This 177-nucleotide RNA was probed chemically with DMS and 2A3. Reactivities are given for positions 27 through 126. For DMS, 1,588 sequencing reads were counted.
RNA sequence: GGGAACGACUCGAGUAGAGUCGAAAAUUCAGCGCAUUCGUGCGCUGAAAAGCAGUACAACGCAUGUACAGAAAACAAAACAAAAACAAAACAAAAAGCGUAGCAGGGUUCUUUUCGAAGAACCCAACGGAAUAUUAUCAUUCGUGAUAAUAUUCCGAAAAGAAACAACAACAACAAC
Reactivity to DMS in 0.01 (KOAc 150mM, MgCl2 10mM, bicine 150mM(pH8.5), 24C), signal-to-noise 2, nucleotides 027 to 126: u000u000c000a000g000c000g020c010a000u010u000c250g020u000g040c010g020c000u000g010a010a020a050a110g030c100a080g000u010a040c050a040a050c110g020c050a120u000g010u000a050c000a070g000a080a040a050a060c120a040a040a080a080c080a040a040a050a040a040c130a110a040a080a060c080a080a040a060a060a080g010c070g040u000a110g040c200a100g010g000g000u000u000c000u000u000u000u000c120g000a000a000g020a010a010c000c000c000a010a010
Reactivity to 2A3 in 0.01 (KOAc 150mM, MgCl2 10mM, bicine 150mM(pH8.5), 24C), signal-to-noise 3, nucleotides 027 to 126: u010u000c000a010g000c000g000c010a010u020u080c160g090u050g010c000g010c010u000g000a000a000a010a000g000c020a000g010u030a010c010a070a000c060g030c110a080u050g000u030a000c050a030g110a020a150a020a030c090a040a090a010a000c040a030a090a050a030a020c050a030a170a010a010c040a040a110a060a040a010g030c020g080u080a050g080c120a110g010g000g000u000u000c000u020u020u070u150c170g080a010a000g000a000a010c010c000c000a000a010